[RMDB]
RNA sequence: GGGAACGACUCGAGUAGAGUCGAAAACUAGCUAAGAAUAUCCUGCAUGUCGUAGGCCCAGAUGCCCGCGCUAAACAGGAUGUUUCUCUCCUUAGUAAGUGCUAUAAGGCUAUGAAUGCAUAUCCUCGUUAUGAUGAUUCUUCGGAAUCAUCAUAACAAAAGAAACAACAACAACAAC
Reactivity to 2A3 in 0.01 (KOAc 150mM, MgCl2 10mM, bicine 150mM(pH8.5), 24C), signal-to-noise 5, nucleotides 027 to 126: c020u010a010g000c010u050a060a010g010a050a010u020a010u020c010c000u000g000c020a030u070g120u220c000g000u010a020g010g000c010c030c040a100g030a120u180g000c010c010c010g000c010g000c000u030a050a050a010c010a000g000g000a010u000g000u020u090u000c040u010c010u030c000c010u010u030a030g030u080a180a040g030u040g060c020u040a050u020a300a050g050g000c010u030a050u140g050a190a060u140g030c020a020u030a070u100c010c030u070c060
Reactivity to DMS in 0.01 (KOAc 150mM, MgCl2 10mM, bicine 150mM(pH8.5), 24C), signal-to-noise 5, nucleotides 027 to 126: c060u000a060g020c020u000a080a030g020a040a020u000a020u000c010c000u010g000c040a300u000g000u010c010g060u010a060g010g020c000c030c210a130g010a170u000g000c000c000c020g050c000g000c010u010a050a150a100c020a010g000g000a000u000g010u000u000u000c040u010c060u000c050c030u000u000a030g000u010a070a090g010u000g010c040u000a140u010a090a120g000g010c070u000a050u000g000a140a100u000g000c020a030u000a110u000c030c010u000c300